[RMDB]
RNA sequence: GGGAACGACUCGAGUAGAGUCGAAAAACCGACAUUACUAUUUGAACUAUCGGACUUUUCUAAGGCAGAAAGAGGUAACGCUGUCUCCCUUAUGAAUGCAGCUAAUGUAUCUUCCAGACCGUUAUGAGACUGACCUAUGGUUCGCCAUAGGUCAGUCAAAAGAAACAACAACAACAAC
Reactivity to 2A3 in 0.01 (KOAc 150mM, MgCl2 10mM, bicine 150mM(pH8.5), 24C), signal-to-noise 4, nucleotides 027 to 126: a000c010c020g030a020c060a100u190u170a030c040u100a150u220u050u120g110a120a020c030u050a030u150c000g040g040a060c060u010u030u050u070c020u080a080a110g030g000c020a010g050a090a250a000g140a040g120g000u080a030a000c020g040c090u000g030u060c040u000c000c010c000u060u100a100u140g120a060a030u110g010c010a000g050c050u060a090a040u070g050u070a040u040c060u030u000c040c000a080g050a120c000c080g010u050u070a070u150g130a050
Reactivity to DMS in 0.01 (KOAc 150mM, MgCl2 10mM, bicine 150mM(pH8.5), 24C), signal-to-noise 1, nucleotides 027 to 126: a120c000c000g040a100c110a040u020u000a120c130u000a040u020u040u000g000a040a040c110u050a020u000c010g000g000a040c010u030u000u000u030c050u040a030a220g000g050c000a170g000a040a000a030g000a090g020g000u020a050a080c180g000c050u000g050u000c170u040c120c000c030u040u000a100u010g020a070a010u000g000c050a000g000c150u000a030a010u120g040u020a030u000c070u040u060c120c000a110g000a070c070c110g020u010u030a050u010g000a020